This 207-nucleotide RNA was probed chemically with 2A3 and DMS. It was measured as part of the RMDB library RNAMAK. For 2A3, 3,829 sequencing reads were counted. For 2A3 the reverse transcriptase was SuperScript II with manganese. DMS adducts were read by reverse transcription with MarathonRT. Values cover nucleotides 27 to 156.
RNA sequence: GGGAACGACUCGAGUAGAGUCGAAAAGUGGCCUUCGGGCCACAAAAAAGCGUACUACUACUUCCUCCUUUGAUCUUUGGGAUCAAACUAUCCCAAAUAGGAUAGGUAGUCAAAGGGAGGAGAAGUAGUAUCGCAAAAACUAUAGUUCGCUAUAGAAGAGUAUUCACCUAUUCGUAGGUGAAUACUCAAAAGAAACAACAACAACAAC
Reactivity to 2A3 in 0.01 (KOAc 150mM, MgCl2 10mM, bicine 150mM(pH8.5), 24C), signal-to-noise 4, nucleotides 027 to 156: g000u000g000g020c010c010u050u060c300g070g010g000c000c020a030c030a000a010a020a010a010a000g000c020g010u020a010c010u000a000c000u030a040c010u150u090c010c000u000c010c000u080u030u030g040a060u120c060u130u070u110g120g070g000a050u090c050a040a060a060c020u040a010u000c010c000c030a130a280a200u180a050g030g010a020u060a050g110g110u100a040g020u020c030a040a040a000g060g030g020a030g000g000a010g000a030a000g000u000a000g000u000a000u060c020g000c010a090a070a030a060a000c010u010a010u000a010g040u050u070c210g000c100u010a010u060a060g090a160a020
Reactivity to DMS in 0.01 (KOAc 150mM, MgCl2 10mM, bicine 150mM(pH8.5), 24C), signal-to-noise 1, nucleotides 027 to 156: g040u000g030g020c010c040u000u000c250g070g090g080c000c000a010c000a000a080a080a170a090a110g010c020g010u000a000c020u000a040c000u000a140c000u010u000c000c020u020c000c020u000u000u010g000a060u020c190u000u010u000g050g050g000a080u000c030a120a060a140c000u000a090u000c000c000c000a050a110a190u000a050g020g000a050u000a070g000g000u050a130g010u000c060a010a020a010g000g000g020a030g000g010a020g000a110a050g000u000a020g010u000a000u000c040g000c010a030a040a110a120a110c000u010a040u000a030g020u000u000c300g020c040u000a040u000a040g000a090a220